[RMDB]
RNA sequence: GGGAACGACUCGAGUAGAGUCGAAAAGGGACCCACUCGACUGGGGUCCGCGUUCCAUCCUUUCUUACCUUGUGGCCGGCAUGGUCCCAGCCUCCUCGCUGGCGCCGGCUGGGCAACAUUCCGAGGGCAAACAUCAAGUUCGCUUGAUGUAAAAGAAACAACAACAACAAC
Reactivity to 2A3 in 0.01 (KOAc 150mM, MgCl2 10mM, bicine 150mM(pH8.5), 24C), signal-to-noise 9, nucleotides 027 to 129: g040g010g000a000c000c020c000a070c060u180c080g280a170c140u140g030g010g010g030u010c010c010g020c010g000u040u020c020c010a090u090c030c010u090u170u100c010u080u120a130c030c010u050u060g050u130g140g050c000c020g020g000c050a110u140g040g020u070c020c020c000a010g020c000c010u100c020c010u070c070g020c020u040g010g000c030g010c010c000g010g000c000u020g000g010g000c010a070a040c010a120u160u060c030c020g010a020g010g030g010c040a120a150
Reactivity to DMS in 0.01 (KOAc 150mM, MgCl2 10mM, bicine 150mM(pH8.5), 24C), signal-to-noise 9, nucleotides 027 to 129: g020g000g010a060c000c010c020a060c090u020c180g000a120c180u040g000g010g030g010u010c010c010g020c030g010u000u000c020c000a110u050c060c040u010u030u020c040u010u010a130c090c030u020u030g040u030g030g030c040c000g000g000c010a070u050g030g010u020c300c000c000a050g020c030c110u040c100c060u030c150g000c020u020g020g010c260g000c010c040g000g000c030u030g000g000g000c020a050a050c090a110u040u030c100c040g020a060g000g000g000c180a080a090
The record gives the reactivity of an RNA of 170 nucleotides to 2A3 and DMS. The DMS profile rests on 114,954 reads. Reactivities are given for positions 27 through 129.